This 207-nucleotide RNA was probed chemically with DMS and 2A3. For 2A3 the reverse transcriptase was SuperScript II with manganese. DMS adducts were read by reverse transcription with MarathonRT. For 2A3, 2,257 sequencing reads were counted. The reactions ran in a buffer of 150 mM KOAc, 10 mM MgCl2 and 150 mM bicine (pH 8.5), at 24 C. For DMS, 3,838 sequencing reads were counted. Values are in units of 0.01, from 0 to 300, in steps of 10.
RNA sequence: GGGAACGACUCGAGUAGAGUCGAAAAGGAGCCGAUACUAUGAUGAUGAGGAUGAGGAUGAAGAUGAGGCUGAGGUAGAGAAUACCGGAAAUGUGACUGUCUCCGUUGUAUGGACUGCUUCUGGGUCAAUAGUCCGUCCCGCAACUGUCACUGAUUCCCGAAUGUUAGAGUUCGCUCUAACAUUCGGAAAAGAAACAACAACAACAAC
Reactivity to DMS in 0.01 (KOAc 150mM, MgCl2 10mM, bicine 150mM(pH8.5), 24C), signal-to-noise 2, nucleotides 027 to 156: g020g020a100g020c000c040g040a120u000a050c070u010a050u010g010a110u000g030a100u000g030a070g040g000a100u000g000a130g010g000a090u000g000a080a080g020a080u000g010a110g020g000c070u020g000a070g020g020u010a060g010a130g010a120a140u000a090c070c000g040g000a030a100a090u020g020u010g010a080c050u000g020u010c030u000c020c040g020u000u000g040u010a100u000g020g000a100c160u000g000c000u000u010c060u000g000g030g030u000c030a060a100u000a070g010u000c010c020g010u000c010c020c070g000c060a060a100c020u010g010u000c070a110c090u000g000a210u000u000c010
Reactivity to 2A3 in 0.01 (KOAc 150mM, MgCl2 10mM, bicine 150mM(pH8.5), 24C), signal-to-noise 3, nucleotides 027 to 156: g050g010a020g080c040c030g050a050u070a180c060u080a050u140g030a020u030g000a000u030g020a040g030g020a020u030g040a020g070g010a030u050g010a020a030g040a030u080g020a030g050g000c050u030g010a040g050g000u070a020g020a020g020a170a070u050a090c020c020g010g060a060a070a030u180g030u030g010a020c010u020g000u070c030u010c080c030g070u060u050g030u030a050u070g030g010a020c010u020g030c000u070u080c080u110g030g010g000u020c030a040a070u030a070g020u030c030c020g020u010c010c000c000g000c010a030a050c070u050g010u050c010a020c040u090g030a110u090u090c010